Description:
The record gives the reactivity of an RNA of 177 nucleotides to DMS and 2A3. For 2A3, 2,772 sequencing reads were counted.

[RMDB]
RNA sequence: GGGAACGACUCGAGUAGAGUCGAAAACACUGGUGCGGUACACGUAUACGGAAGCCGGUGAACUGCUGGCGGUAUAUGACCGCAGCAAUACGCAGGUGCGCGCUUUCACGUAUGACGCGCAGCACCCGUCGACAAACAUGUUCGCAUGUUUGUCGACAAAAGAAACAACAACAACAAC
Reactivity to DMS in 0.01 (KOAc 150mM, MgCl2 10mM, bicine 150mM(pH8.5), 24C), signal-to-noise 3, nucleotides 027 to 126: c090a140c230u000g000g040u000g030c020g000g010u000a060c040a300c050g020u010a050u010a030c040g000g010a110a170g000c020c020g030g050u000g000a140a080c120u010g020c020u000g000g020c000g040g010u000a060u000a030u000g010a160c000c000g010c020a050g000c000a000a030u000a080c180g030c110a050g000g020u000g000c040g010c050g020c000u010u000u000c050a140c300g010u000a050u010g020a020c300g000c010g010c030a080g030c010a030c020c000c070
Reactivity to 2A3 in 0.01 (KOAc 150mM, MgCl2 10mM, bicine 150mM(pH8.5), 24C), signal-to-noise 3, nucleotides 027 to 126: c040a020c050u130g060g070u010g030c020g050g000u160a100c120a010c140g040u040a020u010a020c040g070g100a050a040g000c010c020g020g000u090g100a260a170c100u180g010c010u040g040g020c000g000g000u020a060u000a030u040g120a010c000c010g000c010a010g010c010a000a080u130a130c060g030c170a020g050g000u040g020c020g000c000g020c010u060u230u040c120a150c110g120u180a140u290g050a030c010g000c000g030c050a020g000c000a010c000c010c000